[RMDB]
RNA sequence: GGGAACGACUCGAGUAGAGUCGAAAACAACAGAGAAGUACAUGCCAAGGUAUGGACGUCAGCGCAAUCUCAACGACUACCAACUUGCACGUUAUGCAUUUGACUUUUAUGAGAUAACGUCGAGGACCCGACAUGUAGUAUUCGUACUACAUGUCGGAAAAGAAACAACAACAACAAC
Reactivity to 2A3 in 0.01 (KOAc 150mM, MgCl2 10mM, bicine 150mM(pH8.5), 24C), signal-to-noise 5, nucleotides 027 to 126: c010a000a000c010a010g100a000g020a210a020g040u080a030c010a060u080g040c010c030a050a040g120g010u110a040u100g030g040a040c030g030u050c030a020g020c030g000c060a060a060u030c010u010c050a030a060c060g120a050c030u080a070c040c030a050a070c030u020u010g010c130a000c030g020u050u020a040u050g040c020a050u080u060u090g190a270c060u160u150u100u060a050u100g060a100g010a080u030a030a020c010g010u000c010g030a020g000g060a030c000
Reactivity to DMS in 0.01 (KOAc 150mM, MgCl2 10mM, bicine 150mM(pH8.5), 24C), signal-to-noise 5, nucleotides 027 to 126: c070a090a120c120a100g000a110g010a060a040g010u000a030c070a100u000g010c030c040a100a110g020g010u000a090u010g020g000a070c060g010u020c070a040g010c100g000c090a060a120u000c020u010c030a040a080c130g000a060c070u000a130c080c050a070a120c050u000u000g010c160a020c070g000u000u000a020u000g000c050a010u010u010u000g000a070c170u000u000u000u000a030u000g000a040g000a010u000a030a040c030g010u000c020g000a020g020g000a140c170

Source information
The record gives the reactivity of an RNA of 177 nucleotides to 2A3 and DMS. The reactions ran in a buffer of 150 mM KOAc, 10 mM MgCl2 and 150 mM bicine (pH 8.5), at 24 C. Source: RMDB library OK2TRN, as collected in RNAgym. The 2A3 profile rests on 6,323 reads.